[RMDB]
RNA sequence: GGGAACGACUCGAGUAGAGUCGAAAAGAUAUGGAGCACUGGGAGCUUGGAUUUAAUCUAUACAGCAAACAUGUCGGAAACGACAUGGUAGCUGUAUAGAUUUGUCAGCUCAAGUGCUCCUAAGUCAGAUCUAAGGGUUCUUCGGAACCCUUAGAUCAAAAGAAACAACAACAACAAC
Reactivity to DMS in 0.01 (KOAc 150mM, MgCl2 10mM, bicine 150mM(pH8.5), 24C), signal-to-noise 1, nucleotides 027 to 126: g010a030u000a300u000g000g010a000g050c000a000c010u000g040g020g020a020g050c000u020u010g020g030a070u000u000u020a010a000u010c020u000a030u020a010c000a000g000c020a090a150a300c020a000u000g040u000c020g000g020a200a100a300c000g000a040c010a000u000g000g000u000a300g010c000u000g030u010a000u000a000g000a000u000u000u000g000u000c020a030g000c010u030c060a240a050g000u000g000c000u000c020c000u000a010a020g010u020c040a190
About this RNA: Structure probing data (DMS) for a 177-nucleotide construct. Values cover nucleotides 27 to 126. The reactions ran in a buffer of 150 mM KOAc, 10 mM MgCl2 and 150 mM bicine (pH 8.5), at 24 C. For DMS the reverse transcriptase was MarathonRT.